[RMDB]
RNA sequence: GGGAACGACUCGAGUAGAGUCGAAAACUAGAGACUAUUUGAGAGGGCUCGCAAGGGGAGUAUUGAUAGGAUCCUCGAUUUGCUUCUUGACGAGAAUGACAAAUAUCAAUAUUAAUAGACCUCUUGAUAGCGUGAGAGAAUUCGUUCUCUCACGCUAAAAAGAAACAACAACAACAAC
Reactivity to 2A3 in 0.01 (KOAc 150mM, MgCl2 10mM, bicine 150mM(pH8.5), 24C), signal-to-noise 2, nucleotides 027 to 126: c000u000a030g010a000g010a090c020u030a090u120u120u100g110a150g000a000g030g030g020c000u020c000g050c060a010a030g030g010g010g010a020g030u060a000u030u020g060a060u060a080g070g030a040u020c000c010u040c060g050a060u030u020u130g060c010u030u070c050u020u030g040a110c040g030a000g040a120a100u120g070a000c050a010a110a000u130a020u000c000a000a000u040a030u110u030a050a030u050a080g050a080c000c000u010c010u030u000g010a010
Reactivity to DMS in 0.01 (KOAc 150mM, MgCl2 10mM, bicine 150mM(pH8.5), 24C), signal-to-noise 2, nucleotides 027 to 126: c060u000a100g000a130g000a180c070u000a040u000u020u010g000a070g000a040g000g030g010c080u000c070g030c060a040a030g000g030g000g000a040g010u010a050u000u000g000a050u030a110g010g000a140u010c070c100u020c090g000a080u010u000u100g010c030u000u010c090u000u010g000a110c100g000a040g000a060a030u000g010a130c080a020a070a070u020a040u040c020a020a070u000a080u010u020a120a040u040a070g000a180c030c000u000c000u000u010g000a140

This 177-nucleotide RNA was probed chemically with 2A3 and DMS. The RNA was probed in 150 mM KOAc, 10 mM MgCl2 and 150 mM bicine (pH 8.5) at 24 C. 2A3 adducts were read by reverse transcription with SuperScript II with manganese. It was measured as part of the RMDB library OK1LIB. For DMS, 2,369 sequencing reads were counted.